An RNA of 177 nucleotides, treated with DMS and 2A3 and read out base by base. The reactions ran in a buffer of 150 mM KOAc, 10 mM MgCl2 and 150 mM bicine (pH 8.5), at 24 C. For 2A3 the reverse transcriptase was SuperScript II with manganese. The data come from the RNA Mapping Database (RMDB), library OK2TRN.

RNA sequence: GGGAACGACUCGAGUAGAGUCGAAAACAGUCAAGGUGAAGGCGGGCCAGACCAUCGCCGCAUUCUACCAGAGCACCGUCAUGAUCUUUGGCACGAUGGCUCGCUACAUUCCAAGAGUUAGGGAAAACACGUAUAUGAUCUUCGGAUCAUAUACGUGAAAAGAAACAACAACAACAAC
Reactivity to DMS in 0.01 (KOAc 150mM, MgCl2 10mM, bicine 150mM(pH8.5), 24C), signal-to-noise 6, nucleotides 027 to 126: c100a130g010u000c060a080a170g000g020u000g010a130a140g010g010c020g000g000g020c010c020a090g010a140c110c060a060u010c080g020c040c040g010c100a070u000u000c050u010a050c050c050a070g010a040g010c090a030c030c010g010u010c100a080u000g010a050u010c020u000u000u000g000g020c000a080c100g000a110u000g000g010c020u000c040g010c020u010a060c110a140u010u010c020c000a080a140g010a080g020u010u020a100g000g000g000a080a040a070a200
Reactivity to 2A3 in 0.01 (KOAc 150mM, MgCl2 10mM, bicine 150mM(pH8.5), 24C), signal-to-noise 5, nucleotides 027 to 126: c040a030g100u090c040a050a100g050g010u070g080a090a040g060g000c010g000g030g020c010c000a040g040a080c000c040a080u110c050g040c090c020g020c000a030u140u010c020u080a100c020c040a030g010a010g040c050a040c090c030g090u070c040a140u120g090a090u040c040u060u040u050g010g000c040a010c150g090a100u060g010g000c000u000c010g000c010u040a030c020a080u140u060c020c000a040a000g050a020g060u110u130a080g020g040g000a010a100a030a030